Structure probing data (2A3) for a 177-nucleotide construct.
The RNA was probed in 150 mM KOAc, 10 mM MgCl2 and 150 mM bicine (pH 8.5) at 24 C.
RNA sequence: GGGAACGACUCGAGUAGAGUCGAAAAUAACAGCGAUUGCCGCCAGCCCCGUCGUCUCGGUGCUACAACGCACCGGAUGGAUCUGCGAACCAAUCGGUGACGCCGUCGGCAGUGAGCCGCCGGGGUAGUCGUGACGUCCCUUCGGGGACGUCACGACAAAAGAAACAACAACAACAAC
Reactivity to 2A3 in 0.01 (KOAc 150mM, MgCl2 10mM, bicine 150mM(pH8.5), 24C), signal-to-noise 1, nucleotides 027 to 126: u010a040a000c030a080g010c010g040a010u000u130g100c000c020g130c090c060a000g110c020c040c000c000g080u090c000g000u000c100u030c090g000g070u000g010c000u070a060c010a100a020c100g000c000a000c000c000g060g000a030u020g010g000a120u050c070u080g000c000g030a050a050c000c000a000a220u020c050g090g070u050g030a170c000g060c020c010g120u130c000g010g000c000a030g290u070g140a020g000c010c000g000c000c000g000g020g020g000u000a000